[RMDB]
The data come from the RNA Mapping Database (RMDB), library RFM100. An RNA of 177 nucleotides, treated with 2A3 and DMS and read out base by base. For DMS the reverse transcriptase was MarathonRT. The DMS profile rests on 2,516 reads. The reactions ran in a buffer of 150 mM KOAc, 10 mM MgCl2 and 150 mM bicine (pH 8.5), at 24 C. For 2A3, 489 sequencing reads were counted. 2A3 adducts were read by reverse transcription with SuperScript II with manganese.
RNA sequence: GGGAACGACUCGAGUAGAGUCGAAAAGAAUAGUCUAAGGCGUUUGGGAAUAAUGGAUGUGAGGGAACUCGGCCAAAUAGUCCCGUAUCUUAGGUAGAAGGGAUGCCUAUCCAGAAAUAGGAUAGGUCGAUCCCUUUCUGUUCGCAGAAAGGGAUCGAAAAGAAACAACAACAACAAC
Reactivity to 2A3 in 0.01 (KOAc 150mM, MgCl2 10mM, bicine 150mM(pH8.5), 24C), signal-to-noise 2, nucleotides 027 to 126: g030a000a000u040a050g040u000c010u000a000a050g110g020c060g110u140u150u280g000g000g000a040a040u050a050a300u070g000g000a000u100g280u300g170a000g080g110g060a060a120c000u000c080g020g000c060c000a040a040a040u100a000g050u000c000c000c000g050u000a010u000c030u000u010a010g140g000u000a040g010a030a040g010g020g020a080u210g040c000c000u000a000u020c000c010a050g200a020a170a120u200a040g000g000a000u000a000g000g000u000
Reactivity to DMS in 0.01 (KOAc 150mM, MgCl2 10mM, bicine 150mM(pH8.5), 24C), signal-to-noise 2, nucleotides 027 to 126: g020a140a140u040a130g010u000c000u000a010a010g010g040c180g000u020u030u070g000g000g000a040a030u020a080a150u010g000g000a050u020g020u030g000a090g030g000g060a100a180c060u000c010g010g020c010c020a020a010a110u040a110g000u000c000c000c010g060u000a020u000c000u000u000a000g020g000u030a060g020a050a070g010g050g000a070u000g010c010c000u000a010u000c000c000a070g010a090a090a080u010a000g000g000a010u000a010g000g010u000